[RMDB]
RNA sequence: GGGAACGACUCGAGUAGAGUCGAAAAGGGGUCCAGGGAGAGGCGACCAGGAGCAACAGCUCCACUGAAGCCUCCACGGUGGAGACAUGCUCCUGCAAGCCUCGAGGAUCUGGACGGAGGCACCCAAAAGCCACGAUUCCUUCGGGAAUCGUGGCAAUCAGUCAAUAUAGUUCGCUAUAUUGACUGAAAAAGAAACAACAACAACAAC
Reactivity to 2A3 in 0.01 (KOAc 150mM, MgCl2 10mM, bicine 150mM(pH8.5), 24C), signal-to-noise 2, nucleotides 027 to 156: g010g020g140g020u000c000c000a000g000g010g000a020g010a000g000g010c000g020a040c040c010a000g010g000a020g000c070a040a040c060a210g000c010u000c000c010a000c040u000g030a110a000g000c020c000u030c000c010a000c000g010g000u000g020g000a010g010a020c110a180u300g000c000u000c000c000u000g010c010a010a040g000c030c010u000c000g000a000g000g000a000u020c000u000g000g000a000c000g000g000a020g020g000c000a010c030c000c020a060a140a030a060g000c010c000a000c000g010a000u000u020c020c020u040u210c300g050g000g000a010a000u000c000g000u000g010g010c020a000a040